[RMDB]
The data come from the RNA Mapping Database (RMDB), library M2RFPK. Chemical mapping of a 207-nucleotide RNA with 2A3 and DMS.
RNA sequence: GGGAACGACUCGAGUAGAGUCGAAAAGAUAAGCUAGCAGCAAAAAGGAACCGAUUCCCACGAAGUUCGGAAAGAGAUACCGGGCGAGGCGCUGAAGAAAGAAUCUCGCUUCAGACACCCCAAGGACAUGACCUUAAAAUGUUCGCAUUUUAAGGAACAUAUACGGGACGUUCGCGUCCCGUAUAUGAAAAGAAACAACAACAACAAC
Reactivity to 2A3 in 0.01 (KOAc 150mM, MgCl2 10mM, bicine 150mM(pH8.5), 24C), signal-to-noise 2, nucleotides 027 to 156: g000a050u080a080a030g020c030u030a010g030c070a010g030c060a000a070a140a050a020g060g020a040a030c050c000g040a050u000u020c030c000c000a020c080g030a090a040g030u040u010c010g030g050a080a140a060g090a010g000a010u080a060c020c020g000g000g000c010g010a020g020g030c100g000c070u060g010a070a040g010a030a270a010g070a080a090u060c100u060c160g040c000u020u010c010a050g080a090c000a110c020c030c000c010a020a110g040g040a030c030a080u100g060a020c000c000u000u000a000a010a000a000u010g000u070u090c150g000c090a010u050u000u000u000a000a000g000g020a050a000
Reactivity to DMS in 0.01 (KOAc 150mM, MgCl2 10mM, bicine 150mM(pH8.5), 24C), signal-to-noise 1, nucleotides 027 to 156: g020a070u010a100a040g020c030u000a120g020c050a080g050c020a010a100a060a110a230g020g000a090a090c010c090g000a130u010u000c000c000c050a220c130g000a040a040g000u000u010c010g000g000a090a070a190g010a150g010a230u000a090c030c030g020g000g000c050g030a080g000g020c000g040c020u000g010a080a130g010a020a060a140g000a090a110u010c040u000c020g010c010u010u000c000a080g010a280c010a090c050c000c000c050a040a050g000g000a110c110a080u000g010a130c030c000u000u000a010a010a020a070u020g000u000u000c300g020c000a010u020u000u000u000a010a010g000g000a070a140

DMS adducts were read by reverse transcription with MarathonRT.
Conditions: 150 mM KOAc, 10 mM MgCl2 and 150 mM bicine (pH 8.5), 24 C.